[RMDB]
Conditions: 150 mM KOAc, 10 mM MgCl2 and 150 mM bicine (pH 8.5), 24 C. Chemical mapping of a 207-nucleotide RNA with 2A3 and DMS.

RNA sequence: GGGAACGACUCGAGUAGAGUCGAAAACUCACUCACUACGGUGAGUGAGAAUCUUAAGGCUCAAUAAAGCUUGCCUUGAGGUCCCUCAAGCAGAUAUAGACUGAAACAUUUAGUACAUCCAAGCAGGGAGCAACGGCUCGAGUACGCUCGAGCCGAACAUCGAUUUUAAUUUCGAUUAAAAUCGAUGAAAAGAAACAACAACAACAAC
Reactivity to 2A3 in 0.01 (KOAc 150mM, MgCl2 10mM, bicine 150mM(pH8.5), 24C), signal-to-noise 4, nucleotides 027 to 156: c000u000c000a000c000u000c000a010c010u040a020c270g090g000u000g000a000g000u000g000a000g000a000a020u020c000u020u010a000a010g040g010c010u020c090a070a160u210a300a160a050g110c140u140u090g000c010c000u010u020g000a010g020g020u000c010c020c000u030c030a060a090g010c050a020g080a050u100a060u130a170g110a090c020u060g060a050a130a060c040a070u070u120u120a050g020u040a020c000a050u010c030c010a050a060g050c030a090g090g040g020a040g020c070a130a000c010g000g010c000u000c000g000a020g010u030a030c200g030c080u010c000g000a000g000c020c000g000a000a000
Reactivity to DMS in 0.01 (KOAc 150mM, MgCl2 10mM, bicine 150mM(pH8.5), 24C), signal-to-noise 1, nucleotides 027 to 156: c010u010c010a020c020u000c010a020c000u000a060c300g030g000u020g010a070g020u050g000a020g030a030a050u010c020u010u000a030a070g000g020c020u050c030a130a240u000a100a160a240g000c030u000u000g020c000c030u010u000g000a030g000g020u000c010c050c030u000c040a080a130g000c050a020g010a090u000a100u000a080g030a150c050u030g010a120a100a100c130a130u000u010u010a150g010u020a030c090a110u000c020c000a050a060g020c060a130g010g000g000a120g020c090a090a090c070g050g010c000u030c010g020a040g000u000a050c270g030c000u000c010g000a010g030c000c000g000a020a030

Record summary:
For DMS the reverse transcriptase was MarathonRT. In probing experiments dimethyl sulfate is read out at A N1 and C N3, which are open when not base-paired.